Description: An RNA of 177 nucleotides, treated with DMS and read out base by base. Reactivities are given for positions 27 through 126. DMS adducts were read by reverse transcription with MarathonRT. Conditions: 150 mM KOAc, 10 mM MgCl2 and 150 mM bicine (pH 8.5), 24 C.
RNA sequence: GGGAACGACUCGAGUAGAGUCGAAAAGAUAUGGACCCAAAAUACGAGCUGAACGGUCGGAAACGACCGUCAGCGAUGAGUAUAGGGUCCUAAGUCAAAUCAAUAUGUGGUUCGCCACAUAUUGAAAGUGUCCAUAUUCGUUCGCGAAUAUGGACACAAAAGAAACAACAACAACAAC
Reactivity to DMS in 0.01 (KOAc 150mM, MgCl2 10mM, bicine 150mM(pH8.5), 24C), signal-to-noise 1, nucleotides 027 to 126: g000a060u010a030u010g010g000a010c000c000c000a070a070a170a150u000a000c020g000a020g020c000u000g000a090a030c000g000g010u000c000g010g020a010a000a010c000g000a010c010c000g000u000c000a010g030c000g060a060u020g060a120g010u000a010u020a300g000g010g000u000c000c000u010a000a040g010u000c000a160a170a290u000c000a020a010u000a000u000g010u000g040g010u010u040c300g020c040c000a000c000a000u000a000u000u000g020a030a090a110